Conditions: 150 mM KOAc, 10 mM MgCl2 and 150 mM bicine (pH 8.5), 24 C. Chemical mapping of a 177-nucleotide RNA with 2A3 and DMS. For DMS the reverse transcriptase was MarathonRT. For 2A3, 9,412 sequencing reads were counted.
RNA sequence: GGGAACGACUCGAGUAGAGUCGAAAAGAUAUGGACGUAUAUACUCCGAGGAUCUUUAUCGGAAACGAUAAAGGGAGGAGGUAUGACGUCCUAAGUCAAAACCUGAAAUUGUUCGCAAUUUCAGGAACAAAUUAGGGUACUUCGGUACCCUAAUUUGAAAAGAAACAACAACAACAAC
Reactivity to 2A3 in 0.01 (KOAc 150mM, MgCl2 10mM, bicine 150mM(pH8.5), 24C), signal-to-noise 4, nucleotides 027 to 126: g030a000u050a030u120g010g010a000c010g060u020a030u010a020u080a300c030u000c020c010g050a300g010g010a000u010c000u010u020u000a000u000c010g010g010a060a030a020c000g000a000u010a010a000a000g000g010g010a010g000g000a000g020g010u010a020u080g130a010c020g000u000c010c000u000a040a010g030u010c030a030a020a150a230c000c010u000g000a000a000a030u020u020g040u080u130c300g000c230a000a000u000u000u000c000a010g000g000a010a040
Reactivity to DMS in 0.01 (KOAc 150mM, MgCl2 10mM, bicine 150mM(pH8.5), 24C), signal-to-noise 4, nucleotides 027 to 126: g010a060u000a300u010g010g010a020c000g010u020a030u010a050u000a160c020u010c000c000g010a080g010g010a020u010c000u000u000u000a000u010c000g000g000a120a080a140c000g020a010u000a000a000a010g000g000g000a030g000g010a010g000g000u000a000u010g020a020c000g010u000c000c000u000a010a070g010u000c020a130a100a140a180c010c000u000g000a010a010a010u000u000g000u000u020c250g020c010a010a000u000u000u000c000a000g010g000a070a120